[RMDB]
RNA sequence: GGGAACGACUCGAGUAGAGUCGAAAAGAUAUGGAUGUCCAUGACAUGGUAGUCGGAAACGACUAUACCAACAGCAUGUGACAUCCUAAGUCAAAGCCAUGUAGACUCUUCGGAGUCUACAUGGCAAGCACAACAAUGAGUUCGCUCAUUGUUGUGCAAAAGAAACAACAACAACAAC
Reactivity to DMS in 0.01 (KOAc 150mM, MgCl2 10mM, bicine 150mM(pH8.5), 24C), signal-to-noise 2, nucleotides 027 to 126: g000a030u000a270u000g010g000a010u000g010u000c000c000a000u010g010a090c100a210u010g010g000u000a020g010u000c000g010g010a040a050a130c010g010a000c010u010a140u010a080c020c010a010a060c220a180g030c010a000u000g010u030g020a010c020a010u000c010c000u000a010a080g000u010c030a050a140a160g020c000c000a000u000g000u000a020g000a010c010u010c000u010u010c150g030g000a020g000u000c000u010a000c000a000u000g020g000c020a020a010
Reactivity to 2A3 in 0.01 (KOAc 150mM, MgCl2 10mM, bicine 150mM(pH8.5), 24C), signal-to-noise 3, nucleotides 027 to 126: g010a010u020a020u120g000g000a000u000g000u000c000c020a000u010g100a210c050a130u020g020g030u030a000g010u000c000g000g040a030a060a030c020g000a000c010u070a100u140a180c030c000a040a090c080a110g100c000a000u070g060u290g070a000c000a000u020c000c000u000a020a010g010u020c060a130a080a000g000c000c010a000u000g010u000a000g000a010c000u030c010u060u090c300g070g000a010g010u030c000u000a000c010a000u010g000g010c000a000a000
The data come from the RNA Mapping Database (RMDB), library TTRDEL. Chemical mapping of a 177-nucleotide RNA with DMS and 2A3. The RNA was probed in 150 mM KOAc, 10 mM MgCl2 and 150 mM bicine (pH 8.5) at 24 C. High 2A3 reactivity points to a flexible backbone, as in loops and unpaired stretches.